[RMDB]
RNA sequence: GGGAACGACUCGAGUAGAGUCGAAAAGUGCGGUGGUAGCCGUCCUGGGCUUCUACUUCGGGAUGCGCACGCGGGCCGCGGCUAACCAAGGAUAGUUCGAAGUUCGCGAGCCAGAGGGCAACUCGGGCACUCAAAGGUAAUUCGUUACCUUUGAGUGAAAAGAAACAACAACAACAAC
Reactivity to 2A3 in 0.01 (KOAc 150mM, MgCl2 10mM, bicine 150mM(pH8.5), 24C), signal-to-noise 9, nucleotides 027 to 126: g110u110g020c040g020g030u060g040g130u140a040g020c010c010g020u070c000c020u070g020g010g020c010u130u040c020u110a070c000u070u130c020g060g000g020a090u120g060c050g000c060a030c040g020c010g010g010g000c000c030g020c010g010g010c010u030a050a050c030c040a090a040g130g030a090u070a070g040u140u300c050g020a050a010g000u060u090c010g000c020g030a020g010c010c010a060g040a050g040g030g020c020a010a060c020u020c030g020g020g010
Reactivity to DMS in 0.01 (KOAc 150mM, MgCl2 10mM, bicine 150mM(pH8.5), 24C), signal-to-noise 9, nucleotides 027 to 126: g010u010g020c040g000g020u000g000g010u020a080g010c020c020g000u010c070c030u010g010g010g010c040u010u030c060u010a040c060u010u020c030g000g010g010a100u010g010c090g010c020a100c050g010c030g010g000g000c020c230g000c040g000g010c020u010a050a110c050c080a140a150g000g000a090u010a030g000u010u030c030g010a130a080g010u000u010c020g010c020g000a100g000c010c040a070g010a090g000g000g000c070a080a080c030u010c040g000g000g000
Chemical mapping of a 177-nucleotide RNA with 2A3 and DMS.
For 2A3 the reverse transcriptase was SuperScript II with manganese.
Source: RMDB library OK1LIB, as collected in RNAgym.
DMS adducts were read by reverse transcription with MarathonRT.
The reactions ran in a buffer of 150 mM KOAc, 10 mM MgCl2 and 150 mM bicine (pH 8.5), at 24 C.